[RMDB]
This 177-nucleotide RNA was probed chemically with 2A3 and DMS. Values cover nucleotides 27 to 126. The data come from the RNA Mapping Database (RMDB), library M2PK50. DMS (dimethyl sulfate) methylates the pairing face of unpaired adenines and cytosines. The RNA was probed in 150 mM KOAc, 10 mM MgCl2 and 150 mM bicine (pH 8.5) at 24 C.
RNA sequence: GGGAACGACUCGAGUAGAGUCGAAAAGAUAGUUCGUUCGCGAACUAUCAAACGCGUCGGCGAAGCUAGCGUAUAGCUGAGAAAUCAGCCGAAAACAAACAAAAAGAACGGCCUUCGGGCCGUUCAACUAAGAUAUAAGGUUCGCCUUAUAUCUUAGAAAAGAAACAACAACAACAAC
Reactivity to 2A3 in 0.01 (KOAc 150mM, MgCl2 10mM, bicine 150mM(pH8.5), 24C), signal-to-noise 4, nucleotides 027 to 126: g000a000u010a000g000u010u000c010g000u030u050c190g000c010g100a000a000c010u000a000u000c000a000a010a010c070g030c030g070u060c040g020g030c040g060a080a010g010c010u030a010g020c040g140u210a030u080a150g010c010u030g010a010g060a070a120a030u090c040a020g000c000c000g040a080a030a010a020c040a020a080a000c030a030a170a020a020a050g000a010a000c000g000g010c000c010u050u130c140g030g000g020c000c010g000u000u000c000a000a000
Reactivity to DMS in 0.01 (KOAc 150mM, MgCl2 10mM, bicine 150mM(pH8.5), 24C), signal-to-noise 5, nucleotides 027 to 126: g010a010u000a000g000u000u000c000g020u000u010c200g040c020g010a010a010c010u000a000u000c000a030a090a100c090g010c100g010u000c060g000g020c000g010a130a100g010c020u000a040g010c150g010u000a200u000a130g010c010u010g000a060g000a120a140a130u000c050a080g010c010c020g000a040a050a060a080c130a050a100a100c110a060a090a120a150a130g000a020a010c000g010g010c000c000u000u020c190g020g010g020c000c000g000u000u000c000a010a100